An RNA of 177 nucleotides, treated with DMS and 2A3 and read out base by base. The reactions ran in a buffer of 150 mM KOAc, 10 mM MgCl2 and 150 mM bicine (pH 8.5), at 24 C. It was measured as part of the RMDB library M2PK50. Values cover nucleotides 27 to 126.
[RMDB]
RNA sequence: GGGAACGACUCGAGUAGAGUCGAAAAUCAAUCAUGUUCGCAUGAUUGAAAAGGUCAGGUGACCAAACCACGACACGCGUCGAAGCGACCGUGCCCGGAGGCAAAGUGCAAUCUUCGGAUUGCACAACACGCUCAAUAUGUUCGCAUAUUGAGCGUGAAAAGAAACAACAACAACAAC
Reactivity to DMS in 0.01 (KOAc 150mM, MgCl2 10mM, bicine 150mM(pH8.5), 24C), signal-to-noise 3, nucleotides 027 to 126: u000c000a020a000u000c000a020u000g020u000u000c170g020c010a010u000g000a010u010u000g000a010a040a150a100g000g010u000c010a170g010g010u010g000a030c010c000a050a110a140c010c010a160c070g000a060c030a010c040g000c180g010u000c020g000a080a140g010c060g000a020c010c010g010u000g000c020c040c110g010g000a090g020g010c160a020a070a150g000u000g000c010a020a010u000c000u000u000c150g010g010a010u000u000g000c000a010c000a060a130
Reactivity to 2A3 in 0.01 (KOAc 150mM, MgCl2 10mM, bicine 150mM(pH8.5), 24C), signal-to-noise 4, nucleotides 027 to 126: u010c000a000a010u000c000a000u010g030u060u050c140g000c130a000u000g000a000u010u010g010a060a030a020a050g030g000u040c050a050g020g300u130g220a030c010c000a010a080a010c020c020a030c030g000a010c010a010c050g070c090g030u020c030g060a150a060g150c070g090a020c000c010g010u010g010c030c100c030g040g030a060g040g020c090a140a080a040g000u000g000c000a000a000u010c000u010u020c080g080g000a000u010u000g000c000a000c000a000a000